[RMDB]
RNA sequence: GGGAACGACUCGAGUAGAGUCGAAAAAUGACAUGCUGUACUUAUCAUCCUCGUGUGCGUGGAACAGCGCAGCGUAUGGCUGCAUGAUGGAGCUUUCCAUCUGCUUACUGAUGUAGUAAGUUCCGCUAACAACAGGUCGCUCUACUGGAUGAGCUGCCGCUACGGGGUAAUUCGUUACCCCGUAGCGAAAAGAAACAACAACAACAAC
Reactivity to 2A3 in 0.01 (KOAc 150mM, MgCl2 10mM, bicine 150mM(pH8.5), 24C), signal-to-noise 3, nucleotides 027 to 156: a000u220g040a040c060a060u140g020c010u020g040u070a060c000u060u060a050u130c010a010u060c020c030u090c030g030u150g010u030g020c020g010u060g000g080a050a090c010a060g000c010g000c030a010g000c030g080u160a130u120g170g000c020u030g010c030a020u260g000a000u030g020g030a040g100c070u110u160u030c000c000a000u020c020u040g010c010u010u060a080c080u050g070a090u120g020u090a050g010u010a030a010g000u000u050c020c030g000c030u050a090a030c030a060a000c020a030g030g030u030c020g010c000u000c000u040a100c070u110g110g030a070u050g010a080g000c000u010g030c000